[RMDB]
RNA sequence: GGGAACGACUCGAGUAGAGUCGAAAAGAUAUGGACCUUGUAGGAGAAGCGACGAAGUAUGUAUUAUAGCACAUCGGAAACGAUGUGAAUGUAGCAUACAGAGCUUCUCCUAUUGGGUCCUAAGUCACCUUGUAAAUGUCUUCGGACAUUUACAAGGAAAAGAAACAACAACAACAAC
Reactivity to 2A3 in 0.01 (KOAc 150mM, MgCl2 10mM, bicine 150mM(pH8.5), 24C), signal-to-noise 3, nucleotides 027 to 126: g070a030u110a070u220g010g000a030c000c000u020u020g000u000a000g000g010a020g010a030a010g010c010g300a300c050g050a300a040g000u010a020u080g010u020a300u300u040a040u240a030g070c020a000c020a000u000c000g050g020a110a070a040c010g000a000u020g010u000g010a050a040u070g000u020a020g010c010a000u000a000c010a000g020a000g000c000u000u010c000u010c000c010u000a000u000u000g000g000g010u020c010c000u000a010a000g000u020c010a070
Reactivity to DMS in 0.01 (KOAc 150mM, MgCl2 10mM, bicine 150mM(pH8.5), 24C), signal-to-noise 2, nucleotides 027 to 126: g030a040u000a300u000g000g000a020c000c000u000u010g010u000a000g000g010a040g000a010a000g020c000g020a280c300g020a150a100g010u000a000u000g000u000a080u040u000a030u000a060g010c000a010c000a000u000c010g020g000a110a100a170c020g010a010u000g020u000g000a070a040u020g010u000a060g000c020a010u000a000c010a070g000a190g010c000u000u000c000u000c010c000u000a000u000u000g000g020g010u000c000c000u010a000a030g000u000c050a210
Source information
This 177-nucleotide RNA was probed chemically with 2A3 and DMS. The 2A3 profile rests on 4,483 reads. It was measured as part of the RMDB library TTRINS. 2A3 adducts were read by reverse transcription with SuperScript II with manganese. For DMS the reverse transcriptase was MarathonRT. Values are in units of 0.01, from 0 to 300, in steps of 10. The reactions ran in a buffer of 150 mM KOAc, 10 mM MgCl2 and 150 mM bicine (pH 8.5), at 24 C.